[RMDB]
RNA sequence: GGGAACGACUCGAGUAGAGUCGAAAAGACAUAUUGUAGAAGAAUAAAGACACAGGAAAGCCAAGAGUAAGUGGAAAAAGAAAGCACUUGAAAGUAAUUGACUAUCAGUUUGGCACUGAGGGGAAAAUGAGUGGUCAGGGAGUAGAAUCCUCAAUGAGGUAGGGUGCAUAUUCGUAUGCACCCUACCAAAAGAAACAACAACAACAAC
Reactivity to 2A3 in 0.01 (KOAc 150mM, MgCl2 10mM, bicine 150mM(pH8.5), 24C), signal-to-noise 1, nucleotides 027 to 156: g020a020c020a010u280a010u090u180g020u070a060g000a050a020g000a000a050u140a100a120a030g030a000c000a000c040a100g060g000a090a000a000g030c020c030a010a060g050a010g080u050a120a000g030u080g000g100a090a130a040a000a010g000a040a020a000g020c060a030c030u060u160g040a040a090a000g020u050a030a030u060u050g020a060c030u040a040u070c010a020g030u090u110u170g020g000c060a020c040u020g060a050g070g060g000g000a030a000a000a030u100g020a010g070u030g000g000u000c090a040g050g000g000a000g020u030a010g000a000a000u110c000c020u040c000a000a080u300g010a000
Structure probing data (2A3) for a 207-nucleotide construct. The 2A3 profile rests on 400 reads. As a SHAPE reagent, 2A3 marks flexible, mostly unpaired nucleotides at the ribose 2'-OH. The RNA was probed in 150 mM KOAc, 10 mM MgCl2 and 150 mM bicine (pH 8.5) at 24 C. Reactivities are given for positions 27 through 156.